[RMDB]
RNA sequence: GGGAACGACUCGAGUAGAGUCGAAAAGAUAUGGAUUCGACCCUCGCUACACAGACUAUGAAGUUGAUAACGAAUCGGAAACGAUUCGUUAUCAAUGGAGUCUGUUUAGCGAGCGAAUCCUAAGUCACAUAUAUGGCAGGUUCGCCUGCCAUAUAUGAAAAGAAACAACAACAACAAC
Reactivity to DMS in 0.01 (KOAc 150mM, MgCl2 10mM, bicine 150mM(pH8.5), 24C), signal-to-noise 6, nucleotides 027 to 126: g010a070u010a300u010g000g000a020u000u000c000g000a300c290c270c020u000c000g020c000u000a000c070a020c000a010g000a010c000u000a260u030g000a120a250g000u000u000g010a010u000a010a000c000g010a020a010u000c000g000g010a130a090a210c000g010a010u000u000c000g010u000u000a000u000c000a000a000u000g000g000a010g010u000c000u000g000u000u000u000a000g000c000g010a010g000c020g000a010a010u000c000c010u000a020a090g010u000c050a300
Reactivity to 2A3 in 0.01 (KOAc 150mM, MgCl2 10mM, bicine 150mM(pH8.5), 24C), signal-to-noise 4, nucleotides 027 to 126: g040a030u090a080u250g000g000a020u020u020c030g210a300c140c060c030u000c010g010c000u010a020c010a010c010a070g010a000c010u070a220u300g020a060a020g000u010u000g010a000u010a020a000c000g000a000a000u000c010g050g050a080a080a060c000g010a010u000u000c000g000u000u000a000u010c000a000a010u000g010g010a010g000u000c000u000g020u010u020u000a000g000c000g000a000g000c000g000a000a000u010c000c000u020a190a020g040u030c010a000

An RNA of 177 nucleotides, treated with DMS and 2A3 and read out base by base.
As a SHAPE reagent, 2A3 marks flexible, mostly unpaired nucleotides at the ribose 2'-OH.